[RMDB]
RNA sequence: GGGAACGACUCGAGUAGAGUCGAAAAUAGUGUGGUCCAAAAGGAUGGUGUUGAAAACACUCCUCCUCACUAUUUUACUCUUGGAUGCAAAAUUUUAACGCUCACCCCACGCAACAAGUGGAGUGGCCCUUCUUUCUUACUUCGGUAAGAAAGAAGGAAAAGAAACAACAACAACAAC
Reactivity to DMS in 0.01 (KOAc 150mM, MgCl2 10mM, bicine 150mM(pH8.5), 24C), signal-to-noise 2, nucleotides 027 to 126: u000a000g010u000g010u000g010g000u010c190c130a030a050a120a020g010g030a080u010g020g020u000g000u010u010g000a150a080a130a110c010a000c030u000c000c000u000c010c000u000c010a000c000u000a020u000u000u000u000a150c120u000c110u000u010g020g000a110u010g000c120a050a060a080a160u000u000u000u040a060a070c090g000c050u010c010a060c020c020c000c000a010c010g010c140a120a040c280a050a140g020u000g010g020a030g010u010g000g000c020
Reactivity to 2A3 in 0.01 (KOAc 150mM, MgCl2 10mM, bicine 150mM(pH8.5), 24C), signal-to-noise 4, nucleotides 027 to 126: u010a000g010u010g000u000g030g020u080c080c020a070a080a030a030g030g010a040u150g070g120u010g070u020u100g200a100a140a010a000c000a010c000u010c000c000u000c010c010u010c000a010c000u000a010u000u010u020u020a060c010u000c000u080u140g150g030a100u120g030c070a070a120a160a230u100u180u080u120a170a070c050g020c040u090c060a000c010c010c040c000a010c000g020c020a060a300c030a300a070g000u000g000g010a020g000u010g010g010c010
This 177-nucleotide RNA was probed chemically with DMS and 2A3. Reactivities are given for positions 27 through 126. For 2A3 the reverse transcriptase was SuperScript II with manganese. DMS adducts were read by reverse transcription with MarathonRT. For DMS, 1,170 sequencing reads were counted. Conditions: 150 mM KOAc, 10 mM MgCl2 and 150 mM bicine (pH 8.5), 24 C.